Chemical mapping of a 207-nucleotide RNA with 2A3. Values cover nucleotides 27 to 156. For 2A3 the reverse transcriptase was SuperScript II with manganese.
RNA sequence: GGGAACGACUCGAGUAGAGUCGAAAAAUAAUCCCAGCUACUUGGGAGGCUGAAGUAGGAGAGUCACUUGAACCUGGGAGUUGGAGGUUGUAGUGAGCUGAGAUCGCACCAUUGCACUCCAGCCUGGGCAACAAGAGCAAAAUUCCAUCUCAAAAAACAUUACCCCGUCAUUCGUGACGGGGUAAUGAAAAGAAACAACAACAACAAC
Reactivity to 2A3 in 0.01 (KOAc 150mM, MgCl2 10mM, bicine 150mM(pH8.5), 24C), signal-to-noise 1, nucleotides 027 to 156: a030u110a020a070u030c040c000c020a010g040c060u020a070c010u010u060g000g020g010a070g000g050c040u040g040a190a020g080u170a130g040g030a000g000a020g000u060c050a030c150u000u020g010a020a010c010c000u010g040g040g020a070g130u100u020g020g010a000g000g050u120u050g010u030a020g010u000g000a030g000c050u060g020a040g040a090u190c120g000c020a010c020c020a030u060u000g000c000a000c010u010c020c000a020g000c000c010u040g000g000g060c050a080a130c020a020a020g010a060g070c040a040a160a080a080u140u020c040c000a060u020c060u050c040a090a090a010a080a000a040
Record summary: It was measured as part of the RMDB library OK3TST.